RNA sequence: GGGAACGACUCGAGUAGAGUCGAAAAGCCGAAGAGUUCGCUCUUCGGCGACGAAUUUGGCGUAGAUGAGAGUGUACAGUACUAGCCAUCCCAGAUGUACAAAUAAGCAUUGCUUCGGCAAUGCUAACUCACCCUAUAGAUUCGUCUAUAGGGUGAGAAAAGAAACAACAACAACAAC
Reactivity to 2A3 in 0.01 (KOAc 150mM, MgCl2 10mM, bicine 150mM(pH8.5), 24C), signal-to-noise 9, nucleotides 027 to 126: g000c000c000g000a010a000g010a000g040u090u160c190g020c120u010c000u000u000c000g010g060c000g000a000c010g080a040a120u120u080u140g030g000c060g040u100a040g040a250u150g090a070g010a040g190u150g010u070a060c030a050g030u030a060c030u050a020g010c000c010a030u030c020c000c000a030g040a130u110g020u020a030c030a030a100a060u200a100a020g000c000a000u000u010g000c010u020u050c160g030g000c010a000a000u000g000c000u020a020a000
Reactivity to DMS in 0.01 (KOAc 150mM, MgCl2 10mM, bicine 150mM(pH8.5), 24C), signal-to-noise 8, nucleotides 027 to 126: g000c000c000g010a010a010g010a020g020u000u010c210g020c000u000c010u000u000c000g000g010c010g010a030c140g000a110a100u000u010u010g000g000c020g010u000a050g010a140u010g010a150g010a120g020u000g010u000a040c060a090g000u000a080c030u000a090g010c010c020a070u000c000c010c000a150g000a080u010g010u000a030c060a070a080a090u010a100a040g010c000a010u000u000g010c000u000u010c180g020g000c000a010a000u000g000c000u000a010a060